Chemical mapping of a 177-nucleotide RNA with DMS. The data come from the RNA Mapping Database (RMDB), library TTRDEL. The RNA was probed in 150 mM KOAc, 10 mM MgCl2 and 150 mM bicine (pH 8.5) at 24 C.
RNA sequence: GGGAACGACUCGAGUAGAGUCGAAAAGAUAUGGACGUAGAGCGAUAAGAUCGUGGUCGGAAACGACCACAGAUCUUUUGACGCUCGAGGUCCUAAGUCAAAACGAGGGACGUUCGCGUCCCUCGAACUGUUAAGAGCCGUUCGCGGCUCUUAACAGAAAAGAAACAACAACAACAAC
Reactivity to DMS in 0.01 (KOAc 150mM, MgCl2 10mM, bicine 150mM(pH8.5), 24C), signal-to-noise 2, nucleotides 027 to 126: g020a020u000a300u000g000g000a000c000g020u000a300g020a000g000c000g000a150u000a000a010g000a010u010c010g030u000g020g010u000c000g020g000a070a090a170c000g010a020c010c000a000c010a020g030a010u000c010u000u000u010u000g040a160c070g030c000u000c000g000a150g000g000u000c000c010u020a010a120g000u000c030a030a080a130a190c050g010a000g020g000g010a020c010g060u010u010c300g010c010g000u000c000c000c000u010c010g000a010a070